[RMDB]
RNA sequence: GGGAACGACUCGAGUAGAGUCGAAAAGAAACUGACAGGUAGGAGUAAGGUUGGUGGACGAAACUUUGGAGAGAAUGUAAUUAAUACAUCACCAACGAGGAUACAACCAACAGGUAGAAGGACAGAGCACCUCACACGAAUUCGUUCGUGUGAGGUGAAAAGAAACAACAACAACAAC
Reactivity to 2A3 in 0.01 (KOAc 150mM, MgCl2 10mM, bicine 150mM(pH8.5), 24C), signal-to-noise 2, nucleotides 027 to 126: g040a020a020a010c020u040g080a050c070a080g000g060u080a030g000g060a020g010u080a140a020g130g060u010u000g040g020u020g070g000a030c060g010a000a050a070c030u040u040u080g040g030a090g000a000g080a140a010u020g000u070a010a030u070u220a130a090u050a020c000a050u040c020a000c010c000a030a010c010g000a030g000g040a070u100a240c010a050a030c030c020a020a000c000a000g090g020u030a010g010a130a010g030g000a000c000a020g060a000g010
Reactivity to DMS in 0.01 (KOAc 150mM, MgCl2 10mM, bicine 150mM(pH8.5), 24C), signal-to-noise 3, nucleotides 027 to 126: g000a140a080a040c080u020g010a040c030a050g000g040u020a050g000g010a050g020u000a070a080g020g060u010u000g000g000u020g000g010a100c120g000a120a100a150c040u000u010u000g030g030a070g000a110g000a080a050u010g040u000a020a230u000u020a060a210u010a020c020a020u000c050a030c020c020a030a030c130g000a100g030g000a100u060a040c170a060a070c060c000a050a070c040a050g000g000u000a070g000a050a040g000g020a070c030a030g000a080g000